An RNA of 307 nucleotides, treated with DMS and 2A3 and read out base by base. High DMS reactivity at an A or C suggests that its Watson-Crick edge is free. The data come from the RNA Mapping Database (RMDB), library POS240. The 2A3 profile rests on 14,739 reads.
RNA sequence: GGGAACGACUCGAGUAGAGUCGAAAAGCCGCACGUGAGUGCGGCAAGCACGUACGGUGACGUACGUGCACUCACACGUGAGUGUGAGAACAGAUUGUCUUCGGACAAUCUGACUAAGUACGUGAGUACUUAGAACGGUGAACUACGGUUCACCGAGAUACCAACUUCGGUUGGUAUCAAGUAUGUUACUACGGUAACAUACACGCGAAGACGUGAGUCUUCGCGAUUUAAAUGGGCGAGCGGCACCGCCCGCCAAAACAAACGGUACGUAAUACUUCGGUAUUACGAAAAGAAACAACAACAACAAC
Reactivity to DMS in 0.01 (KOAc 150mM, MgCl2 10mM, bicine 150mM(pH8.5), 24C), signal-to-noise 2, nucleotides 027 to 266: g010c000c000g030c000a000c010g000u010g000a250g010u000g010c010g020g000c020a000a020g000c030a000c000g020u000a010c000g000g000u010g000a040c010g000u000a010c000g030u000g000c000a070c010u020c000a000c000a020c010g000u030g000a160g000u000g030u020g020a020g010a240a300c040a000g000a000u000u000g000u000c000u000u010c160g040g010a010c000a000a000u000c000u000g010a280c010u000a000a000g010u000a010c010g000u020g010a090g010u000a000c000u000u010a010g030a220a210c010g000g010u000g000a030a010c000u000a080c170g040g010u010u000c010a000c010c000g000a050g010a010u000a020c000c000a000a000c000u000u030c160g030g010u000u000g010g000u000a000u000c000a140a110g000u000a000u000g000u000u000a010c000u010a100c160g030g010u000a010a000c010a000u000a000c020a110c040g000c000g000a010a000g020a020c010g000u010g000a200g000u000c010u000u000c010g040c000g010a010u000u000u030a100a110a090u020g010g020g030c240g000a060g020c000g000g000c060a090c060c000g010c190c010c030g000c030c000a090a080a050a150c070a020a030a060c060g000g030u000a110
Reactivity to 2A3 in 0.01 (KOAc 150mM, MgCl2 10mM, bicine 150mM(pH8.5), 24C), signal-to-noise 7, nucleotides 027 to 266: g000c000c000g120c010a010c030g140u150g210a170g030u000g030c000g000g000c010a000a000g000c000a000c000g000u010a000c010g000g040u070g060a020c000g000u000a000c000g010u010g000c000a010c000u010c000a010c000a010c000g090u130g200a130g010u000g020u000g000a010g010a020a030c000a000g000a000u000u000g000u000c010u030u110c240g050g000a000c000a000a000u000c000u000g010a000c000u000a010a000g000u000a000c020g060u060g100a040g010u000a000c000u000u000a000g020a110a030c020g000g000u000g000a000a000c000u030a050c260g100g000u000u000c000a000c000c000g000a010g000a000u000a000c000c000a000a010c010u030u060c170g150g000u000u000g000g000u000a000u000c000a010a010g000u000a000u000g000u000u000a000c000u010a020c260g120g000u000a000a000c000a000u000a000c060a020c020g000c000g000a000a000g000a000c040g140u170g070a060g010u000c000u000u000c000g000c000g000a000u020u040u100a110a170a110u170g090g100g190c140g040a120g010c010g020g020c010a020c030c000g030c020c010c020g000c010c000a030a030a010a010c030a020a010a010c010g030g080u170a030